[RMDB]
Structure probing data (2A3 and DMS) for a 177-nucleotide construct. Values cover nucleotides 27 to 126. The data come from the RNA Mapping Database (RMDB), libraries RFM100 and RFMREP.
RNA sequence: GGGAACGACUCGAGUAGAGUCGAAAACCGAGGGUUAGCCGAUCCUAAGGUCACCCCUAACAGGAAGUGAUCGAAAGGGAAGCUGGUUAAUAUUCCAGCGCCUCAGGUGUUUUGCCAUAUAUAUACGAGAGAUAGUUGAAUUCGUUCAACUAUCUCUAAAAGAAACAACAACAACAAC
Reactivity to 2A3 in 0.01 (KOAc 150mM, MgCl2 10mM, bicine 150mM(pH8.5), 24C), signal-to-noise 7, nucleotides 027 to 126: c010c000g010a050g060g000g010u030u150a030g050c040c020g030a060u050c010c010u070a090a090g010g000u000c000a000c000c020c000c010u030a100a010c020a050g010g040a140a130g010u000g000a010u000c020g060a140a070a050g020g000g020a100a040g000c010u000g010g030u060u070a130a050u080a140u210u040c000c000a010g000c000g050c010c000u040c040a020g010g010u040g050u070u120u100u150g050c010c020a030u080a000u010a010u020a010u020a290c130g050
Reactivity to DMS in 0.01 (KOAc 150mM, MgCl2 10mM, bicine 150mM(pH8.5), 24C), signal-to-noise 7, nucleotides 027 to 126: c000c010g010a040g000g000g010u000u000a130g010c020c030g000a060u010c000c010u010a100a180g000g010u000c010a010c000c030c000c010u010a120a090c300a200g020g000a120a130g010u000g010a000u000c020g000a050a050a060g010g010g020a060a140g020c010u000g000g000u000u020a100a120u020a190u020u020c000c010a010g000c000g020c130c000u000c160a070g010g010u000g000u010u020u010u010g020c060c060a090u010a070u030a080u030a080u010a090c180g000
The RNA was probed in 150 mM KOAc, 10 mM MgCl2 and 150 mM bicine (pH 8.5) at 24 C. Reactivities are rounded to 0.1 and cut off at 0 and 3.